This 177-nucleotide RNA was probed chemically with DMS. Conditions: 150 mM KOAc, 10 mM MgCl2 and 150 mM bicine (pH 8.5), 24 C. Reactivities are given for positions 27 through 126. High DMS reactivity at an A or C suggests that its Watson-Crick edge is free.
RNA sequence: GGGAACGACUCGAGUAGAGUCGAAAAACUAGGUGGUGAGUACGCUCACCACCUAGAAUGUCAAGAGUCGUGGCGCCAUUUCGGCGAGCAGGUUUCUUUUGCCUUCGUGAAAGGUGAGGGAAAUGAAUAAAUGUUCCAGCUUCGGCUGGAACAUUUAAAAAGAAACAACAACAACAAC
Reactivity to DMS in 0.01 (KOAc 150mM, MgCl2 10mM, bicine 150mM(pH8.5), 24C), signal-to-noise 2, nucleotides 027 to 126: a100c000u000a000g020g070u000g030g010u000g000a010g030u010a160c210g040c000u020c010a000c010c010a010c000c000u020a000g000a020a060u000g020u030c050a170a130g010a060g010u000c030g010u010g010g050c030g000c040c010a150u010u030u000c210g020g020c020g000a130g010c180a080g000g000u020u000u000c000u000u000u000u000g010c030c000u020u000c040g000u000g000a160a030a010g000g010u000g000a010g000g000g000a000a010a020u000g000a150a190